The record gives the reactivity of an RNA of 207 nucleotides to 2A3 and DMS. DMS adducts were read by reverse transcription with MarathonRT.
[RMDB]
RNA sequence: GGGAACGACUCGAGUAGAGUCGAAAAUGCACCUUUAAACAAUACAAAAGUAGACACUACUCAAUUAGAAGAGUUUAAAGCAUUACAAGAUUACUACGAAGAGCUUAGCUCUACUAAUAAAGAGACUAAGGAAGAUGUAAAUGAAUAAUCUAAUAGAUCACUCUAGAGAAUUCGUUCUCUAGAGUGAAAAAGAAACAACAACAACAAC
Reactivity to 2A3 in 0.01 (KOAc 150mM, MgCl2 10mM, bicine 150mM(pH8.5), 24C), signal-to-noise 2, nucleotides 027 to 156: u060g020c010a060c010c000u030u070u030a090a070a030c060a030a150u130a080c020a030a120a020a000g010u030a020g090a070c030a030c120u080a020c010u070c060a050a140u050u020a010g070a110a000g020a030g050u000u060u100a050a000a000g000c000a040u050u060a040c010a060a000g020a070u100u060a090c040u040a050c060g050a050a060g010a000g050c000u000u000a010g000c000u000c020u030a090c020u030a010a100u050a130a100a000g010a000g040a000c000u010a000a000g070g020a030a000g010a070u080g010u100a090a050a080u050g020a000a010u220a040a010u300c000u070a090a150u210a170g090a000
Reactivity to DMS in 0.01 (KOAc 150mM, MgCl2 10mM, bicine 150mM(pH8.5), 24C), signal-to-noise 1, nucleotides 027 to 156: u000g000c030a060c150c000u030u000u000a080a100a060c080a080a100u000a140c030a090a130a150a170g020u000a070g010a150c060a100c050u000a030c000u030c010a180a150u000u000a100g010a180a110g010a170g010u000u010u000a040a000a030g010c030a060u000u000a120c040a080a120g000a080u000u010a060c060u000a110c000g140a120a120g000a130g000c010u000u000a010g020c030u000c000u010a170c060u000a030a040u010a070a100a090g000a080g010a150c040u000a020a030g000g010a070a040g010a140u010g000u020a080a140a050u000g010a060a110u000a040a060u000c000u000a080a090u000a240g010a220
The RNA was probed in 150 mM KOAc, 10 mM MgCl2 and 150 mM bicine (pH 8.5) at 24 C. In probing experiments dimethyl sulfate is read out at A N1 and C N3, which are open when not base-paired.